[RMDB]
RNA sequence: GGGAACGACUCGAGUAGAGUCGAAAAAUGUCCAGCACGUGUAGCUGAAAAGGCAGGUGCACGUAACCGGCACGCAUGUACAUGGCCGCGGCGGGCUGGCCGUUGGCGAUCAACGAAAUCAGGCGCAGUCCCUCUGAGCGUUCGCGCUCAGAGGGACAAAAGAAACAACAACAACAAC
Reactivity to 2A3 in 0.01 (KOAc 150mM, MgCl2 10mM, bicine 150mM(pH8.5), 24C), signal-to-noise 2, nucleotides 027 to 126: a000u090g000u010c050c000a040g010c060a000c000g000u010g060u030a020g080c070u070g200a000a160a000a000g280g010c000a040g020g020u040g030c040a040c010g000u010a000a190c040c050g010g070c070a000c020g030c010a050u050g000u080a030c050a130u080g120g000c000c050g000c000g000g000c000g000g000g070c050u000g000g000c020c010g070u090u270g020g000c090g110a250u130c030a070a010c010g050a000a140a110u040c000a040g010g000c030g000c040a000
The record gives the reactivity of an RNA of 177 nucleotides to 2A3.
2A3 adducts were read by reverse transcription with SuperScript II with manganese.
It was measured as part of the RMDB library OK1LIB.